[RMDB]
RNA sequence: GGGAACGACUCGAGUAGAGUCGAAAACGGCGGCAGCGGCGACGAGCAUAUCCGAGAACUUGCGAGGCAGGGCGCGCAGGAAGCGCUUUAUCAAGACAAGAUCGACGAGACGCGCGGCGGCUUCGGAUCGACGCAGAAGAAAUUCAAUUCUCGGAAACCUGUAUGAGUGAUUCGUCACUCAUACAGGAAAAGAAACAACAACAACAAC
Reactivity to 2A3 in 0.01 (KOAc 150mM, MgCl2 10mM, bicine 150mM(pH8.5), 24C), signal-to-noise 2, nucleotides 027 to 156: c030g020g050c010g000g030c010a010g030c000g030g020c010g020a040c060g030a050g030c050a080u070a120u100c020c010g010a000g000a030a050c050u060u050g040c020g030a050g000g000c020a020g030g050g000c050g010c020g000c030a020g070g070a100a020g010c010g000c000u010u060u060a100u050c040a050a030g070a150c020a030a060g000a150u030c020g060a070c020g030a040g000a020c010g040c000g030c040g040g030c020g060g000c000u020u010c030g000g010a080u050c010g050a010c030g000c060a020g040a060a020g000a030a050a010u120u030c070a030a070u020u000c020u000c030g030g040a150a020a020
Reactivity to DMS in 0.01 (KOAc 150mM, MgCl2 10mM, bicine 150mM(pH8.5), 24C), signal-to-noise 2, nucleotides 027 to 156: c080g020g050c030g010g050c050a110g030c030g020g000c020g080a080c030g030a090g000c080a140u010a110u000c010c020g010a120g000a020a070c040u010u000g000c000g030a300g020g020c000a060g040g000g030c010g020c030g000c040a220g030g000a150a170g010c000g020c050u010u000u000a070u010c020a110a110g030a230c090a030a170g000a220u010c020g020a150c060g020a180g010a060c120g010c060g040c010g040g020c010g000g030c030u000u000c050g000g010a130u020c010g020a120c030g010c110a140g010a090a140g010a030a070a140u000u000c050a050a180u000u000c010u010c000g020g010a060a130a060
The record gives the reactivity of an RNA of 207 nucleotides to 2A3 and DMS. DMS adducts were read by reverse transcription with MarathonRT. Values cover nucleotides 27 to 156. Source: RMDB library OK3TST, as collected in RNAgym. The DMS profile rests on 2,324 reads. The RNA was probed in 150 mM KOAc, 10 mM MgCl2 and 150 mM bicine (pH 8.5) at 24 C.